[RMDB]
RNA sequence: GGGAACGACUCGAGUAGAGUCGAAAAUAUACACCGAAAGUCGGCACAACACCGGACUCGCGGUGAGCGAUGCAGCGUAGCUAAUGCUACGCAGCUGCUGUGCGGAUGGCUAGCAAAGGCUAGCCUAGGUACUACGUCCAUUCGUGGACGUAGUACCAAAAGAAACAACAACAACAAC
Reactivity to DMS in 0.01 (KOAc 150mM, MgCl2 10mM, bicine 150mM(pH8.5), 24C), signal-to-noise 3, nucleotides 027 to 126: u040a180u060a090c090a110c000c030g000a020a030a090g000u020c000g000g000c050a040c080a100a190c090a030c000c000g010g000a170c110u000c260g000c040g000g000u000g000a130g030c110g010a040u080g020c030a050g030c000g000u000a000g000c020u000a120a130u020g020c000u000a000c010g030c000a010g000c020u010g000c060u010g010u000g000c010g010g020a070u010g000g000c000u000a000g000c000a160a130a090g030g040c000u000a000g010c010c010u000a050
Reactivity to 2A3 in 0.01 (KOAc 150mM, MgCl2 10mM, bicine 150mM(pH8.5), 24C), signal-to-noise 4, nucleotides 027 to 126: u140a000u040a040c030a050c010c010g060a120a000a000g030u030c030g060g000c100a010c030a250a100c020a040c020c010g050g090a160c060u060c160g130c000g000g000u030g040a000g000c020g180a230u140g000c040a020g000c000g040u010a000g000c020u170a180a110u300g000c000u000a000c000g000c010a000g010c000u060g000c010u020g020u050g020c000g050g020a080u070g010g000c000u000a000g000c030a200a160a090g220g000c020u000a000g000c010c000u000a010
This 177-nucleotide RNA was probed chemically with DMS and 2A3.
The RNA was probed in 150 mM KOAc, 10 mM MgCl2 and 150 mM bicine (pH 8.5) at 24 C.
The 2A3 profile rests on 4,391 reads.